An RNA of 207 nucleotides, treated with 2A3 and read out base by base. As a SHAPE reagent, 2A3 marks flexible, mostly unpaired nucleotides at the ribose 2'-OH. The reactions ran in a buffer of 150 mM KOAc, 10 mM MgCl2 and 150 mM bicine (pH 8.5), at 24 C. The 2A3 profile rests on 492 reads.
RNA sequence: GGGAACGACUCGAGUAGAGUCGAAAAGUGAAAUAUAGGGAGGAGCAGUGAGGUCUCUGCCUUCAGGCAGCACACGUGGAAUGACAGACCAAUUCUGAUACAGUUUUCUUAUCUAUUUACAACUGGAAAAGGCAUGAGUGCUAUGAUGCAGGCAAGAUAUGCUAAAUCGGUUCGCCGAUUUAGCAUAAAAAGAAACAACAACAACAAC
Reactivity to 2A3 in 0.01 (KOAc 150mM, MgCl2 10mM, bicine 150mM(pH8.5), 24C), signal-to-noise 1, nucleotides 027 to 156: g040u030g010a010a030a040u200a110u070a130g000g000g000a000g020g000a040g000c000a010g060u060g040a020g040g000u040c040u010c030u050g000c000c010u110u090c020a070g010g040c040a000g030c090a050c000a000c180g030u090g080g050a070a010u100g020a030c020a010g130a020c000c000a060a040u090u020c030u060g010a100u070a130c010a010g010u010u000u210u000c060u060u040a100u120c040u040a140u040u160u160a070c040a100a030c030u030g060g000a090a040a000a000g000g020c030a010u010g010a000g120u060g000c000u010a040u060g010a010u100g000c000a000g040g020c030a030a000g040a040